Chemical mapping of a 177-nucleotide RNA with DMS and 2A3.
RNA sequence: GGGAACGACUCGAGUAGAGUCGAAAACACGUACGAGAGGUACACUAGUGUGAUCCGCAUGCUAGCUCUCUGCUAGUCUACGCUGAUCCUAGACAUGGUACUCAGACGAUCCUAGAUACAUGGAUCGGCGUGAGCGGCAUUUCGAUGCCGCUCACGCAAAAGAAACAACAACAACAAC
Reactivity to DMS in 0.01 (KOAc 150mM, MgCl2 10mM, bicine 150mM(pH8.5), 24C), signal-to-noise 2, nucleotides 027 to 126: c100a110c240g000u000a050c110g010a090g020a150g010g000u000a050c060a190c030u000a060g000u000g000u010g010a090u000c100c070g010c000a040u000g000c050u000a000g000c000u010c260u010c290u000g000c000u020a000g000u010c040u010a050c020g030c030u000g020a080u000c000c010u000a090g000a110c180a130u000g000g020u020a000c030u000c040a140g000a100c070g000a010u030c010c000u000a180g090a190u000a110c160a140u020g000g030a020u000c000g040
Reactivity to 2A3 in 0.01 (KOAc 150mM, MgCl2 10mM, bicine 150mM(pH8.5), 24C), signal-to-noise 2, nucleotides 027 to 126: c080a020c090g110u150a100c090g000a060g000a020g280g130u100a010c050a040c050u000a010g130u050g120u150g250a010u020c000c030g000c010a000u100g050c000u010a000g000c000u060c010u000c020u020g000c030u040a020g070u020c050u090a050c190g020c020u000g010a000u030c000c000u000a010g010a050c020a110u100g070g000u070a030c000u000c050a050g030a070c030g040a000u000c000c020u020a020g010a180u240a030c100a060u080g010g010a050u000c000g010
DMS adducts were read by reverse transcription with MarathonRT. The RNA was probed in 150 mM KOAc, 10 mM MgCl2 and 150 mM bicine (pH 8.5) at 24 C. The data come from the RNA Mapping Database (RMDB), library OK2TRN. Values cover nucleotides 27 to 126.